Structure probing data (2A3) for a 207-nucleotide construct. Reactivities are given for positions 27 through 156. The 2A3 profile rests on 900 reads. The RNA was probed in 150 mM KOAc, 10 mM MgCl2 and 150 mM bicine (pH 8.5) at 24 C. Values are in units of 0.01, from 0 to 300, in steps of 10.
[RMDB]
RNA sequence: GGGAACGACUCGAGUAGAGUCGAAAAUACCGUCUUCUCCCCGACGGUUUCAAUCCAUACCUUCACGUUGUGUAGCGUAGGUGGAAGGUAUCGUGUGGUGUAUAAACACCACAUAGUCUCUUAGGGGUCAAGCUGAUAAACUUCGGUUUAUCAGCAAGUUUCCUGUUGUCUUCGGACAACAGGAAACAAAAGAAACAACAACAACAAC
Reactivity to 2A3 in 0.01 (KOAc 150mM, MgCl2 10mM, bicine 150mM(pH8.5), 24C), signal-to-noise 2, nucleotides 027 to 156: u060a020c000c000g010u030c010u140u010c020u110c000c010c000c000g000a000c010g000g090u000u050u020c040a030a050u030c040c020a000u000a030c000c000u080u050c020a010c030g190u190u190g190u110g170u300a050g040c020g040u090a110g080g070u060g030g060a030a010g020g020u030a040u050c020g000u000g000u000g000g000u000g060u030a080u140a220a190a020c000a000c000c000a000c000a000u030a010g000u010c010u000c000u160u200a060g000g000g000g020u060c100a090a080g050c000u000g000a000u010a040a000a000c010u010u050c100g070g000u000u000u000a000u020c020a000g000c000a000a000